[RMDB]
RNA sequence: GGGAACGACUCGAGUAGAGUCGAAAAGAUAUGGAAGCGAAGCGAUAAGUGCCCAUCGGAAACGAUGGAGCACUUUUGACGCCGCUUCCUAAGUCAAAACAUGCAUCUGGUUCGCCAGAUGCAUGAACUUAAUCACUAUCUUCGGAUAGUGAUUAAGAAAAGAAACAACAACAACAAC
Reactivity to 2A3 in 0.01 (KOAc 150mM, MgCl2 10mM, bicine 150mM(pH8.5), 24C), signal-to-noise 3, nucleotides 027 to 126: g000a010u030a000u060g000g000a010a000g000c020g120a230a040g020c010g030a080u050a300a040g070u000g000c000c000c000a000u000c000g000g000a050a010a010c000g000a000u000g000g000a000g000c000a000c000u000u000u010u010g000a000c000g000c000c000g000c000u000u000c000c000u000a000a000g010u000c010a010a000a070a170c000a000u010g020c010a000u000c000u010g000g070u070u070c250g070c090c000a000g000a010u000g000c000a000u000g000a010a000
Reactivity to DMS in 0.01 (KOAc 150mM, MgCl2 10mM, bicine 150mM(pH8.5), 24C), signal-to-noise 7, nucleotides 027 to 126: g000a020u000a150u010g000g010a020a010g010c000g010a160a130g020c000g010a060u010a010a010g030u000g000c000c000c000a000u000c000g010g010a040a030a080c010g010a020u000g000g000a070g010c000a000c000u000u000u000u000g010a290c020g000c010c000g000c000u000u000c000c000u000a000a050g000u000c020a110a080a120a230c000a010u000g000c000a000u000c000u000g000g000u000u010c240g010c010c000a000g000a000u000g000c000a000u000g000a020a120